[RMDB]
Source: RMDB library OK2TST, as collected in RNAgym.
Chemical mapping of a 177-nucleotide RNA with DMS and 2A3.
Values cover nucleotides 27 to 126.
The RNA was probed in 150 mM KOAc, 10 mM MgCl2 and 150 mM bicine (pH 8.5) at 24 C.
For 2A3, 2,884 sequencing reads were counted.
Reactivities are rounded to 0.1 and cut off at 0 and 3.
2A3 adducts were read by reverse transcription with SuperScript II with manganese.
RNA sequence: GGGAACGACUCGAGUAGAGUCGAAAAUGAAUGGAGAGACUCCUAUCAGCUUCAACGGAGUCAAACUGGUGGCAGGACCGCUUUCGACUGCCUGGACUCCAUUUGAUCGGAAAGUAGUGCAGUACGCCUCACCCUGUUUAUUCGUAAACAGGGUGAGAAAAGAAACAACAACAACAAC
Reactivity to DMS in 0.01 (KOAc 150mM, MgCl2 10mM, bicine 150mM(pH8.5), 24C), signal-to-noise 4, nucleotides 027 to 126: u000g020a040a040u010g000g000a030g000a290g000a050c010u010c010c010u000a170u010c130a100g000c200u000u010c120a110a160c220g010g000a020g000u000c000a020a070a140c170u000g010g010u000g020g010c000a020g000g010a100c050c090g020c090u000u000u000c040g000a120c000u000g000c000c000u010g000g010a230c000u000c000c010a020u000u000u000g000a120u010c090g020g010a030a060a030g000u000a080g020u010g010c060a070g000u010a090c100g020c080
Reactivity to 2A3 in 0.01 (KOAc 150mM, MgCl2 10mM, bicine 150mM(pH8.5), 24C), signal-to-noise 2, nucleotides 027 to 126: u110g020a020a000u030g000g000a020g020a010g010a000c010u030c000c000u060a110u160c090a040g120c070u230u160c060a060a050c060g010g000a010g000u010c010a010a050a020c090u090g100g040u130g030g030c010a020g020g020a050c060c030g040c060u040u080u090c030g010a030c000u000g000c030c000u030g080g030a020c010u000c000c000a020u000u050u060g110a080u090c070g020g070a020a030a000g060u100a030g050u050g080c030a020g060u050a030c070g040c040